[RMDB]
Notes
The record gives the reactivity of an RNA of 207 nucleotides to DMS and 2A3. Source: RMDB library OK3TST, as collected in RNAgym. The 2A3 profile rests on 4,626 reads. For 2A3 the reverse transcriptase was SuperScript II with manganese. The reactions ran in a buffer of 150 mM KOAc, 10 mM MgCl2 and 150 mM bicine (pH 8.5), at 24 C. DMS adducts were read by reverse transcription with MarathonRT.
RNA sequence: GGGAACGACUCGAGUAGAGUCGAAAAGUAAUAGAUAAACGGAUGACGAGAAAGGGUGCGCUGAUAUCCGUUACGAAUGCUAGCAGUAAAUAGAAUAGCGCUCCUAAUACAACUAGCAACAAAAGGAUAAGGUAUCGUGAUGUCAAUCACAUUGCGACCUAAAUAGGACUUUCGAGUCCUAUUUAGGAAAAGAAACAACAACAACAAC
Reactivity to DMS in 0.01 (KOAc 150mM, MgCl2 10mM, bicine 150mM(pH8.5), 24C), signal-to-noise 3, nucleotides 027 to 156: g040u020a060a160u010a080g000a170u000a060a090a100c030g010g030a080u000g040a260c030g010a160g010a090a100a160g030g000g020u000g010c000g040c020u010g030a170u000a060u000c010c010g000u010u000a060c050g000a100a150u000g000c030u010a010g020c050a150g000u000a030a180a130u010a120g010a050a110u010a080g020c030g020c040u000c010c000u000a060a090u000a130c060a080a000c020u010a030g060c010a020a170c090a030a080a050a080g010g030a070u010a070a110g010g020u000a070u000c010g010u000g000a020u000g010u000c040a100a120u010c160a090c020a050u000u000g010c000g000a120
Reactivity to 2A3 in 0.01 (KOAc 150mM, MgCl2 10mM, bicine 150mM(pH8.5), 24C), signal-to-noise 6, nucleotides 027 to 156: g020u050a030a130u070a140g070a050u120a040a090a000c010g020g010a020u020g060a030c080g020a030g120a180a050a040g030g010g020u050g010c040g000c000u020g020a030u000a030u120c000c000g000u010u030a020c040g090a110a020u070g020c020u030a020g010c060a010g060u130a040a080a170u120a090g080a090a080u030a050g020c010g010c010u060c000c010u030a050a020u080a040c010a040a030c020u020a000g000c040a030a050c030a050a120a030a010g040g020a050u080a090a060g070g050u090a030u110c010g010u020g000a000u010g020u060c080a090a090u080c030a040c000a030u010u020g000c010g010a020